[RMDB]
RNA sequence: GGGAACGACUCGAGUAGAGUCGAAAAGAUAUGGACGUAACAGGCGAAGAACGUACCGCUGGUCGGAAACGACCAUGUACGGGAGCCUGGAGAAGUCCUAAGUCAAACCGUGACUUCGGUCACGGAACAGUAGGCUACUGUUCGCAGUAGCCUACUGAAAAGAAACAACAACAACAAC
Reactivity to DMS in 0.01 (KOAc 150mM, MgCl2 10mM, bicine 150mM(pH8.5), 24C), signal-to-noise 3, nucleotides 027 to 126: g030a060u000a300u010g010g010a010c010g010u000a130a270c010a000g010g000c000g010a110a190g030a130a190c010g000u000a000c000c020g000c010u000g000g010u000c000g000g000a080a080a200c010g020a010c010c000a000u000g000u010a000c000g020g000g020a110g010c000c000u010g010g000a060g000a100a170g000u030c000c010u020a060a100g000u020c000a100a120a110c000c020g010u000g000a010c000u010u020c180g000g000u000c000a020c000g000g020a030a090
Reactivity to 2A3 in 0.01 (KOAc 150mM, MgCl2 10mM, bicine 150mM(pH8.5), 24C), signal-to-noise 2, nucleotides 027 to 126: g070a010u110a070u300g010g010a000c000g020u020a050a020c000a010g010g020c000g130a210a020g030a100a030c000g010u010a000c000c000g000c030u000g000g000u010c010g030g000a080a080a050c000g010a000c000c000a010u110g000u020a000c000g010g030g000a010g000c020c000u010g000g000a000g000a010a000g000u000c000c000u000a120a000g070u030c050a090a080a070c000c000g000u000g010a000c010u060u090c300g120g000u000c000a010c000g000g000a020a000